[RMDB]
Structure probing data (DMS) for a 177-nucleotide construct. Reactivities are given for positions 27 through 126. The RNA was probed in 150 mM KOAc, 10 mM MgCl2 and 150 mM bicine (pH 8.5) at 24 C. DMS adducts were read by reverse transcription with MarathonRT.

RNA sequence: GGGAACGACUCGAGUAGAGUCGAAAAGAUAUGGAUUUAGCAGAGUACGGCCGUAUGAGAACUCGUGUGGUCGGAAACGACCAUUAUCGAGACAUACGGCCGUACGACGAAGCUAAAUCCUAAGUCACUUAGGCUUUAUCUUCGGAUAAAGCCUAAGAAAAGAAACAACAACAACAAC
Reactivity to DMS in 0.01 (KOAc 150mM, MgCl2 10mM, bicine 150mM(pH8.5), 24C), signal-to-noise 2, nucleotides 027 to 126: g010a030u000a300u000g000g000a000u000u000u000a030g030c020a120g000a180g000u000a000c010g000g030c010c020g030u000a000u000g000a220g000a110a180c000u010c000g050u000g020u010g000g000u000c010g000g010a090a090a140c020g030a000c010c000a010u000u000a060u010c010g010a020g000a150c020a020u000a010c010g020g000c030c000g000u020a000c000g000a130c200g010a130a110g000c020u000a010a000a020u000c000c000u000a000a090g010u000c030a240